Source: RMDB library RNAMAK, as collected in RNAgym. Structure probing data (2A3) for a 207-nucleotide construct. The RNA was probed in 150 mM KOAc, 10 mM MgCl2 and 150 mM bicine (pH 8.5) at 24 C.

RNA sequence: GGGAACGACUCGAGUAGAGUCGAAAAGGGGUCUGAGCGAUAAGCAUCACCCCAGCGAGGAUCCUGAAGCCUCCACGGGGGAGCUGAACUGAUGCUUUUGACGCUCAGACGGAGGCACCCAAAGUUCUGUCAGUUUGUUCGCAAACUGACAGAACAAGGGGAGAAACAUGUUCGCAUGUUUCUCCCCAAAAGAAACAACAACAACAAC
Reactivity to 2A3 in 0.01 (KOAc 150mM, MgCl2 10mM, bicine 150mM(pH8.5), 24C), signal-to-noise 1, nucleotides 027 to 156: g060g000g000g000u000c000u010g000a000g000c000g050a020u000a080a000g030c010a010u000c010a100c000c000c000c000a010g010c130g010a010g040g010a040u220c040c120u300g120a300a100g150c000c000u020c040c010a100c160g000g000g000g000g070a030g090c110u180g080a090a050c050u200g000a000u000g000c000u040u020u000u090g230a090c020g000c000u010c010a000g000a000c000g010g010a010g010g000c070a060c030c000c000a110a010a000g000u000u000c000u000g000u000c000a000g010u000u000u000g070u070u060c140g020c190a000a000a000c000u000g000a000c000a010g000a000a000c000a000a030